[RMDB]
RNA sequence: GGGAACGACUCGAGUAGAGUCGAAAAGUAACUAUUCUACUACUCCAUAUGGAAAUCCAUCUAUGGCAGGAUAUGGAACAGUUGAUAAGCAUUAUGCUAACUUUAUUGUGUUACCAUAUGAGCCAGAACGACCACCCUUGUUCGCAAGGGUGGUCGUAAAAGAAACAACAACAACAAC
Reactivity to 2A3 in 0.01 (KOAc 150mM, MgCl2 10mM, bicine 150mM(pH8.5), 24C), signal-to-noise 2, nucleotides 027 to 126: g090u110a010a030c130u150a300u140u300c020u010a120c000u040a000c000u010c030c050a060u080a050u300g080g000a050a170a090u060c080c130a000u000c110u070a110u050g000g000c000a000g010g200a000u040a000u090g040g040a090a090c040a000g060u250u130g000a100u050a250a000g030c020a040u130u100a170u300g020c000u030a030a050c010u040u170u100a060u300u090g000u000g040u140u000a300c000c000a000u040a000u000g060a000g000c010c000a000g040a030
Chemical mapping of a 177-nucleotide RNA with 2A3. For 2A3 the reverse transcriptase was SuperScript II with manganese. It was measured as part of the RMDB library OK1LIB.